[RMDB]
RNA sequence: GGGAACGACUCGAGUAGAGUCGAAAACAUCUAAAGAUCAGUGGGUAUUGCACUUGAAAGAUUGGCAUUGGUUGAGAAAUAGCAGUCUGAACUGGGAUGAACGGUACUCCAUCGAAAUCAAUUGUAGCAUAACACUUACUUUCGAGUAAGUGUUAUGAAAAGAAACAACAACAACAAC
Reactivity to DMS in 0.01 (KOAc 150mM, MgCl2 10mM, bicine 150mM(pH8.5), 24C), signal-to-noise 9, nucleotides 027 to 126: c070a070u010c070u010a070a100a120g000a070u000c050a070g030u010g010g010g010u000a050u000u010g010c050a060c060u000u000g010a100a100a050g010a050u010u000g010g010c040a060u000u000g010g010u000u010g010a110g010a050a050a070u000a090g020c050a040g010u000c030u000g010a070a080c080u000g000g000g010a080u000g010a050a110c060g000g000u000a050c040u000c030c030a040u000c060g000a060a070a060u010c090a060a120u010u010g010u000a100g010
Reactivity to 2A3 in 0.01 (KOAc 150mM, MgCl2 10mM, bicine 150mM(pH8.5), 24C), signal-to-noise 8, nucleotides 027 to 126: c020a050u060c020u170a130a030a020g080a050u060c030a010g040u050g010g040g020u090a060u050u140g020c050a030c050u040u050g060a090a050a020g060a050u040u070g070g020c030a030u020u070g090g030u070u100g050a040g050a070a080a020u090a030g000c020a000g010u000c020u040g030a100a060c030u040g000g020g030a060u070g040a070a020c020g020g000u030a040c010u010c040c010a050u060c050g040a060a030a030u050c010a010a050u170u100g090u090a030g060
Structure probing data (DMS and 2A3) for a 177-nucleotide construct. DMS adducts were read by reverse transcription with MarathonRT. 2A3 adducts were read by reverse transcription with SuperScript II with manganese. The 2A3 profile rests on 16,429 reads. The RNA was probed in 150 mM KOAc, 10 mM MgCl2 and 150 mM bicine (pH 8.5) at 24 C.